Structure probing data (2A3 and DMS) for a 207-nucleotide construct. For DMS the reverse transcriptase was MarathonRT. For 2A3 the reverse transcriptase was SuperScript II with manganese. It was measured as part of the RMDB library OK3TST.
RNA sequence: GGGAACGACUCGAGUAGAGUCGAAAAUUCAACUAUCUCAACCAAGGGGUGGUUCAUUCUAUAACCUGGAAGCAGAUGAAGCCACACAUACAGAAUAUCUCUGAAGAUGUGAUUUUUUCUGUGAUGUGUUAUAAAGAUGAGGAUGAAGAGCUGUGGCAAUAGUCUCUGAAUUCGUUCAGAGACUAUUAAAAGAAACAACAACAACAAC
Reactivity to 2A3 in 0.01 (KOAc 150mM, MgCl2 10mM, bicine 150mM(pH8.5), 24C), signal-to-noise 4, nucleotides 027 to 156: u120u070c030a040a040c020u080a060u100c020u010c070a090a120c060c050a130a160g000g000g020g030u050g000g000u040u030c030a190u130u020c030u050a070u040a160a090c010c010u000g030g020a040a010g000c080a010g010a060u030g020a030a010g010c020c000a000c000a000c000a020u050a030c000a000g020a000a030u020a050u060c030u000c040u090g100a190a060g070a260u180g020u020g040a050u180u080u030u000u040u010c010u000g010u030g100a070u010g010u000g030u030u050a120u050a110a080a020g060a020u050g010a010g040g000a020u060g050a030a040g030a010g040c070u060g020u030g050g000c000
Reactivity to DMS in 0.01 (KOAc 150mM, MgCl2 10mM, bicine 150mM(pH8.5), 24C), signal-to-noise 3, nucleotides 027 to 156: u000u000c030a070a130c070u010a070u000c010u010c020a080a160c090c070a140a150g020g010g030g030u000g020g000u030u000c020a090u000u010c040u000a080u000a090a100c010c020u000g020g030a080a170g000c140a090g010a050u000g000a060a080g000c040c040a050c050a010c030a120u000a110c010a030g010a000a070u000a040u000c040u000c040u000g030a100a160g020a130u000g010u000g000a010u000u000u010u000u000u000c010u000g000u010g010a050u000g010u000g000u000u000a070u000a070a070a060g010a070u000g020a070g020g020a090u010g000a070a090g000a100g000c060u010g040u010g030g020c050